Source information: Conditions: 150 mM KOAc, 10 mM MgCl2 and 150 mM bicine (pH 8.5), 24 C. An RNA of 177 nucleotides, treated with DMS and 2A3 and read out base by base.

RNA sequence: GGGAACGACUCGAGUAGAGUCGAAAAGGCGCGCUUUCGCGAUCGCGCGGGCGGUGGUGCAUGGCCGCUCCCAGCCCGUGGCGCGAGCCGUCUGCUCCAUUGCGACAACGAGCGAGACCCCGGCCGCCAACGAAUAUGUGUUCGCACAUAUUCGUUGAAAAGAAACAACAACAACAAC
Reactivity to DMS in 0.01 (KOAc 150mM, MgCl2 10mM, bicine 150mM(pH8.5), 24C), signal-to-noise 9, nucleotides 027 to 126: g010g000c000g000c260g010c030u010u020u000c020g010c020g010a190u030c100g020c030g010c010g000g010g010c010g010g020u020g000g020u000g010c030a110u020g010g010c110c060g000c020u010c120c000c020a250g010c010c010c010g030u010g000g010c010g010c010g000a020g000c010c010g010u000c010u010g000c140u010c010c050a120u020u010g010c040g010a080c070a070a100c110g000a060g000c040g000a090g000a110c040c010c020c050g000g000c030c030g010c130
Reactivity to 2A3 in 0.01 (KOAc 150mM, MgCl2 10mM, bicine 150mM(pH8.5), 24C), signal-to-noise 9, nucleotides 027 to 126: g010g000c010g010c020g000c030u090u170u100c020g010c020g080a110u110c070g010c010g000c000g140g000g000c020g000g030u150g020g010u040g010c090a220u250g170g020c120c020g000c000u020c010c000c000a020g000c000c000c010g010u030g020g000c000g000c000g000a010g000c000c000g000u000c020u020g010c010u000c010c010a090u050u160g030c030g030a040c040a110a050c050g020a020g040c020g010a050g050a120c010c000c000c000g020g010c010c010g020c010
The data come from the RNA Mapping Database (RMDB), libraries RFM100 and RFMREP. DMS adducts were read by reverse transcription with MarathonRT.